[RMDB]
Structure probing data (2A3 and DMS) for a 177-nucleotide construct.
RNA sequence: GGGAACGACUCGAGUAGAGUCGAAAAGAGGCUGGGAAGUCCAGAUCAAAAUGCUAGCAGAUUUCACGUCUGGUGAGGGCUCUCUGCUUUACAGAUGGUGCCUUUUAUGGGUCCCCAUGUGGCAGAACAACAAUGUCUGGUUCGCCAGACAUUGUUGAAAAGAAACAACAACAACAAC
Reactivity to 2A3 in 0.01 (KOAc 150mM, MgCl2 10mM, bicine 150mM(pH8.5), 24C), signal-to-noise 3, nucleotides 027 to 126: g030a000g010g060c030u040g030g010g100a140a030g060u000c000c000a020g020a150u100c050a010a110a050a090u160g060c020u060a050g100c060a040g010a190u080u190u230c140a070c070g030u030c030u060g010g000u050g050a090g020g000g000c010u010c000u020c010u030g030c040u130u080u090a020c030a020g110a030u090g080g040u070g010c000c000u050u140u020u120a190u250g050g000g020u170c050c020c020c020a030u070g020u060g080g040c060a010g010a050a020
Reactivity to DMS in 0.01 (KOAc 150mM, MgCl2 10mM, bicine 150mM(pH8.5), 24C), signal-to-noise 3, nucleotides 027 to 126: g000a100g000g020c030u000g010g000g000a130a050g000u010c020c040a070g000a110u010c050a060a070a080a110u010g020c070u010a100g010c040a050g000a050u000u000u010c140a100c200g000u000c020u000g010g000u010g000a120g000g000g020c030u000c100u000c010u000g010c050u000u010u010a070c050a010g000a090u010g000g000u000g010c010c010u000u010u020u020a120u010g010g010g020u050c110c040c010c110a090u000g010u000g000g010c050a070g000a060a210

For DMS, 2,638 sequencing reads were counted. The data come from the RNA Mapping Database (RMDB), library OK2TST. Values cover nucleotides 27 to 126.